[RMDB]
RNA sequence: GGGAACGACUCGAGUAGAGUCGAAAACUGGCUCACUUCGGUGAGCCAGAAACCCCUACAGACGGACUGAACGGCAACGGGUAGCGAGAACCCGGUAGGGAAAAAGGCGUACACUUCGGUGUACGCCGUCAUCUUUAGGGUUCGCCCUAAAGAUGACAAAAGAAACAACAACAACAAC
Reactivity to 2A3 in 0.01 (KOAc 150mM, MgCl2 10mM, bicine 150mM(pH8.5), 24C), signal-to-noise 2, nucleotides 027 to 126: c000u010g000g040c010u010c000a010c020u040u040c080g080g000u000g000a000g010c010c010a000g000a010a000a000c010c000c000c010u010a010c000a010g040a020c010g020g050a080c150u060g040a070a000c010g020g000c010a080a040c020g010g010g000u010a010g020c010g000a030g010a020a010c020c000c010g030g010u010a000g010g040g070a100a110a030a000a000g000g000c010g000u010a000c020a000c010u030u120c270g120g000u000g010u000a000c010g000c000c000
Reactivity to DMS in 0.01 (KOAc 150mM, MgCl2 10mM, bicine 150mM(pH8.5), 24C), signal-to-noise 4, nucleotides 027 to 126: c010u000g000g000c000u000c000a010c000u000u020c190g020g040u010g000a020g020c000c000a000g000a030a080a150c180c000c000c010u010a020c010a120g000a030c010g000g000a160c280u000g010a270a180c020g000g000c010a080a150c000g020g010g010u000a010g000c010g000a110g000a030a020c000c000c000g020g010u000a010g010g000g010a030a060a050a130a120g010g000c000g010u000a010c000a020c000u000u000c180g030g000u000g010u000a000c000g020c000c000